[RMDB]
RNA sequence: GGGAACGACUCGAGUAGAGUCGAAAAGCAUACGUUACAUAUUCUGUGUUCGUAUGCGGUAAGCAACACAGAAUAUGUAAGCUUACCACCGUACGGUGGACAUGCGAAAGCAUGUCCAUCGUACGGAGCAGCUAGUAGCGUUCGCGCUACUAGCUGCAAAAGAAACAACAACAACAAC
Reactivity to 2A3 in 0.01 (KOAc 150mM, MgCl2 10mM, bicine 150mM(pH8.5), 24C), signal-to-noise 2, nucleotides 027 to 126: g000c020a090u140a170c150g140u040u030a020c020a000u000a000u000u000c000u000g000u010g020u010u090c140g130u300a170u270g020c020g000g030u070a060a050g000c000a010a000c000a000c000a010g000a000a000u040a010u030g000u010a000a000g000c000u030u050a080c010c000a030c000c000g000u000a000c000g000g000u000g000g000a000c010a000u000g000c000g050a080a020a000g000c000a000u000g000u000c000c000a000u000c000g000u000a000c000g000g000a000